[RMDB]
RNA sequence: GGGAACGACUCGAGUAGAGUCGAAAACUUACUACACCGACGACAAAUUUAGUACUCAUUGCAGCUUUAGUUACUAACAAAGAUGGUAGAAACAUUUCUACAAUAGAAAUCGCUGACGCUUUUGCAAACUCCUCGUUAGUUUCGACUAACGAGGAGUAAAAGAAACAACAACAACAAC
Reactivity to DMS in 0.01 (KOAc 150mM, MgCl2 10mM, bicine 150mM(pH8.5), 24C), signal-to-noise 2, nucleotides 027 to 126: c030u010u010a080c060u000a080c020a040c020c170g000a070c140g000a120c090a030a090a100u040u050u040a100g000u000a080c070u010c120a050u000u010g000c030a060g040c070u000u000u010a050g000u050u000a060c070u020a100a040c170a040a030a110g040a050u000g040g010u010a000g010a010a010a020c240a040u010u020u000c020u000a070c060a000a110u010a110g000a000a070a020u000c120g000c040u030g000a080c060g000c000u000u050u010u000g000c140a020a140
Reactivity to 2A3 in 0.01 (KOAc 150mM, MgCl2 10mM, bicine 150mM(pH8.5), 24C), signal-to-noise 5, nucleotides 027 to 126: c000u040u060a030c010u080a050c070a090c040c010g090a090c040g020a030c120a020a140a060u130u170u060a070g020u070a050c010u040c090a080u020u110g020c040a030g040c020u050u040u090a020g010u040u040a050c030u050a130a020c070a060a130a040g190a110u180g060g000u010a000g050a010a080a000c070a110u040u100u000c000u040a020c010a040a050u070a140g120a040a050a050u120c080g000c040u010g020a030c030g020c020u080u130u060u120g060c020a070a090
Chemical mapping of a 177-nucleotide RNA with DMS and 2A3. For 2A3, 3,331 sequencing reads were counted. The reactions ran in a buffer of 150 mM KOAc, 10 mM MgCl2 and 150 mM bicine (pH 8.5), at 24 C. For DMS the reverse transcriptase was MarathonRT. DMS (dimethyl sulfate) methylates the pairing face of unpaired adenines and cytosines. It was measured as part of the RMDB library OK1LIB. The DMS profile rests on 2,067 reads.